The data come from the RNA Mapping Database (RMDB), library OK1LIB. Structure probing data (2A3) for a 177-nucleotide construct.
RNA sequence: GGGAACGACUCGAGUAGAGUCGAAAAUCUUUUAGAGAAAGAGCUUCGUUGCUUGGUGUCAAACUAGGAUAUGCGAUGGAUGAUCUAUUCUCUUUUUUUUUUCAAAAAAAUCAUCUUGGAGAUUGUGCUUUCGAUCUCUUUUCGAAGAGAUCGAAAGAAAAGAAACAACAACAACAAC
Reactivity to 2A3 in 0.01 (KOAc 150mM, MgCl2 10mM, bicine 150mM(pH8.5), 24C), signal-to-noise 1, nucleotides 027 to 126: u010c000u090u230u080u170a060g030a010g000a000a050a000g000a010g040c000u010u010c040g080u000u010g040c050u130u030g040g040u090g140u200c130a240a140a000c020u010a050g140g000a060u010a070u190g050c000g040a030u010g010g240a160u140g060a060u010c020u040a300u040u000c000u000c110u030u000u000u000u000u000u000u000u000u040c100a080a110a030a030a030a030a080u100c020a000u080c010u120u100g060g000a140g060a230u120u170g010u000g070

The 2A3 profile rests on 329 reads.